[RMDB]
RNA sequence: GGGAACGACUCGAGUAGAGUCGAAAAUUCAUCCUGACUGAGAAUCAGGCACUGAACGGGGAGUAUUCCAUCGCCGUGCUGAGCACGUAGCUAACUCCUGCAAAAACUCAACACAACCCGCGCCCUGCAGGCUGAAUAAGUUCGCUUAUUCAGCCUGAAAAGAAACAACAACAACAAC
Reactivity to DMS in 0.01 (KOAc 150mM, MgCl2 10mM, bicine 150mM(pH8.5), 24C), signal-to-noise 2, nucleotides 027 to 126: u000u000c030a030u010c000c010u000g010a040c050u000g010a120g000a170a270u000c020a050g000g020c100a010c030u000g010a050a020c100g020g020g020g030a120g020u010a120u000u000c030c060a080u010c050g000c080c090g000u000g040c020u000g000a070g010c030a070c100g010u020a070g010c040u010a100a100c070u010c170c010u000g000c110a060a030a100a100a090c080u000c030a050a040c050a050c090a090a150c070c040c010g020c100g010c010c020c020u010g020
Reactivity to 2A3 in 0.01 (KOAc 150mM, MgCl2 10mM, bicine 150mM(pH8.5), 24C), signal-to-noise 2, nucleotides 027 to 126: u010u000c010a140u200c000c010u010g010a050c030u090g080a030g070a280a060u010c000a010g000g000c020a030c060u010g010a060a000c010g040g000g010g000a030g010u040a130u120u050c000c040a050u080c100g010c050c050g050u030g000c030u160g040a040g050c020a010c090g040u060a010g000c000u000a000a010c020u040c010c030u000g040c020a020a000a000a060a110c030u030c030a030a010c030a020c020a130a090c000c020c010g000c000g030c020c000c000u040g050

An RNA of 177 nucleotides, treated with DMS and 2A3 and read out base by base. In probing experiments dimethyl sulfate is read out at A N1 and C N3, which are open when not base-paired. For DMS, 1,356 sequencing reads were counted. The RNA was probed in 150 mM KOAc, 10 mM MgCl2 and 150 mM bicine (pH 8.5) at 24 C. The data come from the RNA Mapping Database (RMDB), library RFMREP.